RNA sequence: GGGAACGACUCGAGUAGAGUCGAAAAAAAGAUAUGGAUCGUAUGGAGGCCGUAUUGUCAGCUCGAGGGAUCGGAAACGAUCCCGAGAGCUUGGAUUUAUACGGUGAAGUACGAUCCUAAGUCAAAACAACUAAGCUUUCUUCGGAAAGCUUAGUUGAAAAGAAACAACAACAACAAC
Reactivity to DMS in 0.01 (KOAc 150mM, MgCl2 10mM, bicine 150mM(pH8.5), 24C), signal-to-noise 1, nucleotides 027 to 126: a070a070a110g010a030u020a300u000g020g000a040u010c000g000u010a000u040g020g000a300g000g020c020c020g000u000a000u010u010g010u020c000a020g010c000u020c000g000a300g030g010g010a000u010c010g020g000a110a080a230c010g020a000u010c010c010c000g000a240g020a000g020c000u000u030g000g010a080u010u010u000a010u000a000c040g000g000u000g000a230a160g000u000a010c000g000a000u000c010c050u030a010a080g000u010c010a120a060a110a250